[RMDB]
RNA sequence: GGGAACGACUCGAGUAGAGUCGAAAACGAAGUCUUUUCAUCAGUAUCUGGGCUGAAGGCUAAGCAUGUGGAUGAUGAAUACUGACCUCUGUGUUUUUACGUCCUCUGAUCUGUAACUCACCUGGAGAUUUCCCACAGUAUUCGUACUGUGGGAAAUAAAAGAAACAACAACAACAAC
Reactivity to DMS in 0.01 (KOAc 150mM, MgCl2 10mM, bicine 150mM(pH8.5), 24C), signal-to-noise 6, nucleotides 027 to 126: c080g010a110a080g010u000c020u010u010u000u000c040a070u000c060a060g020u000a080u010c040u000g010g000g020c090u010g010a080a090g010g020c060u010a090a090g020c080a050u010g020u000g000g010a080u000g010a050u000g000a040a060u010a040c130u000g010a070c070c050u000c040u000g010u010g010u000u000u000u000u000a100c110g010u000c010c010u000c050u000g000a070u000c070u000g000u010a050a100c060u000c050a070c060c030u010g010g010a110g010
Reactivity to 2A3 in 0.01 (KOAc 150mM, MgCl2 10mM, bicine 150mM(pH8.5), 24C), signal-to-noise 4, nucleotides 027 to 126: c020g020a080a010g060u030c020u010u090u070u070c040a090u010c020a020g030u080a110u040c040u060g040g050g000c030u050g070a080a010g140g000c040u050a010a040g050c040a060u130g030u080g090g070a030u050g000a020u060g020a070a010u040a090c050u050g070a100c020c030u050c040u030g030u020g050u040u020u040u060u090a060c040g020u020c000c000u020c020u040g040a090u050c010u030g070u050a060a050c030u010c010a060c020c020u030g010g030a110g000